Background
The record gives the reactivity of an RNA of 177 nucleotides to 2A3 and DMS. The reactions ran in a buffer of 150 mM KOAc, 10 mM MgCl2 and 150 mM bicine (pH 8.5), at 24 C. Source: RMDB library M2PK50, as collected in RNAgym.

RNA sequence: GGGAACGACUCGAGUAGAGUCGAAAAACCAUCCUAUUCGUAGGAUGGUGCACCAUUGCCGAUAGUAUAUAAUACCGCAGGCGGAAAAGCGGUUCAAAUAAGGAACUUGUCAGUUCGCUGACAAGAACUUCCAUUAUUGUUUCGACAAUAAUGGAAGAAAAGAAACAACAACAACAAC
Reactivity to 2A3 in 0.01 (KOAc 150mM, MgCl2 10mM, bicine 150mM(pH8.5), 24C), signal-to-noise 6, nucleotides 027 to 126: a000c000c000a010u010c010c000u030a030u030u080c240g060u040a000g000g000a000u000g010g000u000g010c010a050c010c010a070u060u220g040c010c010g070a080u050a090g170u020a090u020a030u030a290a220u070a060c010c000g020c040a040g090g000c000g000g050a070a100a020a010g020c020g010g010u050u130c090a070a060a070u170a160a100g110g000a050a090c000u010u000g000u000c000a000g020u010u080c180g000c090u000g000a000c000a000a000g000a010a020
Reactivity to DMS in 0.01 (KOAc 150mM, MgCl2 10mM, bicine 150mM(pH8.5), 24C), signal-to-noise 8, nucleotides 027 to 126: a030c000c000a000u000c000c000u010a020u010u010c180g030u000a000g000g010a010u000g000g010u000g010c160a210c020c010a130u000u010g010c010c020g000a140u010a070g010u010a060u010a100u000a120a090u000a030c000c010g030c040a140g010g020c040g020g000a060a050a090a110g010c030g000g000u000u000c150a030a070a080u020a090a110g010g000a110a140c000u000u000g000u000c000a000g010u010u000c210g010c000u000g000a010c000a000a000g010a080a160